Background: Chemical mapping of a 177-nucleotide RNA with DMS.

RNA sequence: GGGAACGACUCGAGUAGAGUCGAAAACGUCCCACCAGCUACCACGCGGAGUGUAUACCCCUUCAGUCUUCGCGGGCGGUCGUUUUCUGGGCCAAGAUGCAAACACGCGAGGCUUCGGCCUCGCGUGGAAUGUUAUCAUGUUCGCAUGAUAACAUUCAAAAGAAACAACAACAACAAC
Reactivity to DMS in 0.01 (KOAc 150mM, MgCl2 10mM, bicine 150mM(pH8.5), 24C), signal-to-noise 3, nucleotides 027 to 126: c300g010u010c020c000c000a130c130c110a070g020c060u000a050c050c030a110c050g030c020g030g000a020g000u000g010u000a120u010a300c030c010c010c050u000u000c090a150g010u000c010u000u000c020g010c040g010g010g020c110g020g010u000c050g010u010u000u000u000c020u020g000g000g010c070c060a110a090g000a080u010g010c110a060a090a300c010a000c000g000c010g000a030g000g000c000u000u010c180g010g020c010c010u000c010g000c000g040u000g010
Description
Values cover nucleotides 27 to 126. DMS adducts were read by reverse transcription with MarathonRT. The reactions ran in a buffer of 150 mM KOAc, 10 mM MgCl2 and 150 mM bicine (pH 8.5), at 24 C.